An RNA of 177 nucleotides, treated with 2A3 and DMS and read out base by base. The 2A3 profile rests on 480 reads. It was measured as part of the RMDB library RFM100. For 2A3 the reverse transcriptase was SuperScript II with manganese. The DMS profile rests on 1,334 reads.

[RMDB]
RNA sequence: GGGAACGACUCGAGUAGAGUCGAAAACUUGGGUACCUAGGGAAAGGUGAAGGAGCUAGACUCCUUACCAAGUACUUAGGGGGUGGAGAGUAGUAGGAGUGUUGGAGAAGCCCGGUGCUCCUAUGAACUACGCGAGCUUAUUCGUAAGCUCGCGUAGAAAAGAAACAACAACAACAAC
Reactivity to 2A3 in 0.01 (KOAc 150mM, MgCl2 10mM, bicine 150mM(pH8.5), 24C), signal-to-noise 1, nucleotides 027 to 126: c060u030u050g000g000g170u090a070c040c000u010a010g000g000g000a000a020a020g000g010u070g070a100a000g060g000a030g010c070u070a040g050a220c000u000c000c000u000u000a000c000c000a000a000g000u000a000c000u010u010a000g040g000g030g040g020u190g070g160a230g000a000g050u200a000g000u000a010g000g060a030g000u030g030u030u260g040g000a260g060a240a050g100c000c000c000g000g000u020g000c020u010c030c000u030a030u050g000a020a020
Reactivity to DMS in 0.01 (KOAc 150mM, MgCl2 10mM, bicine 150mM(pH8.5), 24C), signal-to-noise 1, nucleotides 027 to 126: c030u010u010g000g000g000u050a140c010c000u000a010g000g000g000a040a210a140g020g010u000g050a000a080g000g000a000g090c030u000a070g010a110c000u000c000c010u000u000a050c000c000a020a000g000u000a010c000u000u090a000g060g000g030g000g020u020g000g000a190g040a100g010u000a070g000u000a050g000g000a020g010u000g060u000u040g000g000a180g020a140a220g020c210c000c080g030g000u000g050c000u010c000c000u030a030u000g000a060a140